This 177-nucleotide RNA was probed chemically with 2A3 and DMS. For 2A3, 8,347 sequencing reads were counted. The DMS profile rests on 3,899 reads. The RNA was probed in 150 mM KOAc, 10 mM MgCl2 and 150 mM bicine (pH 8.5) at 24 C. The data come from the RNA Mapping Database (RMDB), library TTRDES. For DMS the reverse transcriptase was MarathonRT. 2A3 adducts were read by reverse transcription with SuperScript II with manganese.

RNA sequence: GGGAACGACUCGAGUAGAGUCGAAAAGAUAUGGAAUUCGACCGAGGACAACAGCAAAGCUCGGAAACGAGCUUUGACAUGUCCGAGGUCGAGAUUCCUAAGUCAAAGACCGUGUUCGCACGGUCAACGAGUUUAUUCAGUUCGCUGAAUAAACUCGAAAAGAAACAACAACAACAAC
Reactivity to 2A3 in 0.01 (KOAc 150mM, MgCl2 10mM, bicine 150mM(pH8.5), 24C), signal-to-noise 1, nucleotides 027 to 126: g020a020u100a060u210g000g020a010a000u000u030c000g000a010c020c010g000a020g010g000a020c000a220a030c040a160g080c000a030a000a000g000c000u010c030g040g000a040a020a020c010g010a000g000c020u010u000u010g030a030c000a030u060g010u010c000c000g000a000g010g010u000c000g000a000g000a000u000u010c000c000u010a140a020g080u060c080a090a130a070g010a000c000c010g000u000g030u010u070c190g000c120a000c000g020g000u000c010a000a010
Reactivity to DMS in 0.01 (KOAc 150mM, MgCl2 10mM, bicine 150mM(pH8.5), 24C), signal-to-noise 4, nucleotides 027 to 126: g000a030u000a300u020g000g020a000a040u000u000c000g000a020c000c000g020a300g000g000a010c020a040a150c270a150g010c020a000a000a000g000c000u000c000g010g000a070a080a220c000g020a010g020c000u000u000u000g000a040c070a140u000g010u000c000c000g000a300g010g020u000c000g000a010g000a020u000u000c000c000u000a050a110g010u000c040a150a130a130g000a010c000c010g040u000g010u000u020c260g000c020a010c000g000g000u000c020a030a090